[RMDB]
RNA sequence: GGGAACGACUCGAGUAGAGUCGAAAACGCUGGGUAUUAGGGUCGGAAAGGCGCGAAACUGCCUGAAGCGCGCACGGGCAGGAGCCUUCUCCCUAAUACCUGUGCUGAAGCGCGCACGGCAACCGAAAGGUGCGAAAGGUCAGGUUCGCCUGACCAAGCAUACACCAACGUUCGCGUUGGUGUAUGCAAAAGAAACAACAACAACAAC
Reactivity to 2A3 in 0.01 (KOAc 150mM, MgCl2 10mM, bicine 150mM(pH8.5), 24C), signal-to-noise 2, nucleotides 027 to 156: c030g030c020u030g010g010g000u010a010u010u010a000g040g010g000u080c150g040g130a290a180a050g050g000c030g020c060g140a130a150a140c030u010g000c000c000u070g030a170a040g020c000g000c000g000c000a010c000g010g010g010c010a000g000g030a000g000c010c000u070u040c080u150c020c000c000u000a000a000u000a000c000c000u000g000u000g000c000u030g030a110a050g000c020g000c000g010c010a010c000g000g010c030a050a020c000c010g130a100a050a030g000g020u030g000c000g070a240a050a010g000g000u000c000a000g010g030u010u100c160g060c040c000u000g000a000c000c000a000a020